[RMDB]
RNA sequence: GGGAACGACUCGAGUAGAGUCGAAAAGAAGGACAUAACGCGAAGAAGCAGAGAGAAGACUGUAGUGACGCGACUCACUAGACGUCAACGACGGCAAGAGAGAGCCGAAGGAGACGAUCCUUAGGAGAGUAUAGCGACUCUUCGGAGUCGCUAUACUAAAAGAAACAACAACAACAAC
Reactivity to DMS in 0.01 (KOAc 150mM, MgCl2 10mM, bicine 150mM(pH8.5), 24C), signal-to-noise 2, nucleotides 027 to 126: g000a030a050g000g000a110c000a010u000a120a040c050g000c000g000a060a010g000a130a100g080c020a080g000a070g010a060g010a120a100g090a060c020u000g010u020a000g000u000g000a160c120g000c000g000a130c090u000c080a090c040u000a040g000a110c050g050u000c010a080a120c000g000a150c000g050g000c010a060a030g000a040g010a150g000a060g000c000c000g020a060a110g000g000a300g000a050c120g040a090u020c050c000u000u000a060g020g000a040g010
Reactivity to 2A3 in 0.01 (KOAc 150mM, MgCl2 10mM, bicine 150mM(pH8.5), 24C), signal-to-noise 2, nucleotides 027 to 126: g040a010a050g090g020a020c000a030u110a110a000c070g050c060g040a090a020g020a080a000g020c040a020g050a000g020a010g110a110a120g050a090c070u070g010u090a020g040u050g040a020c030g010c010g120a040c000u000c030a120c000u000a040g000a040c000g010u000c000a010a010c010g000a000c000g000g000c010a120a000g090a050g030a000g040a000g110c010c000g000a010a000g000g000a020g000a040c030g110a210u030c000c000u010u020a000g020g020a030g000